Source information:
This 207-nucleotide RNA was probed chemically with 2A3. It was measured as part of the RMDB library OK3TST.
RNA sequence: GGGAACGACUCGAGUAGAGUCGAAAAGUGACCGCACUCCGGGACGUGUCGUUCGACGUGCCGAUGGGGUCCAUCCUCGGGCUCGAGGGACCAAGCGGGAGUGGGAAAUCGACGAUACUACACGCGGUCGCCGGGCUGUUGGUCCCGACCGACGGCACUCACGGAGUGGAUUCGUCCACUCCGUGAGAAAAGAAACAACAACAACAAC
Reactivity to 2A3 in 0.01 (KOAc 150mM, MgCl2 10mM, bicine 150mM(pH8.5), 24C), signal-to-noise 2, nucleotides 027 to 156: g040u040g070a090c010c010g120c060a010c020u080c010c040g010g000g100a080c090g130u170g020u000c240g300u060u020c040g000a020c070g040u170g210c010c000g010a120u250g000g000g000g090u010c100c010a140u070c000c020u010c020g000g050g040c000u060c100g010a000g000g050g000a000c010c000a050a110g200c100g070g060g000a070g060u070g000g030g060a000a270a000u040c010g030a020c050g010a020u020a220c020u010a030c040a010c070g030c090g000g000u000c000g050c060c000g050g100g000c010u000g030u120u050g010g010u080c000c000c060g030a100c040c020g090a090c010g000g050c000a000

The reactions ran in a buffer of 150 mM KOAc, 10 mM MgCl2 and 150 mM bicine (pH 8.5), at 24 C.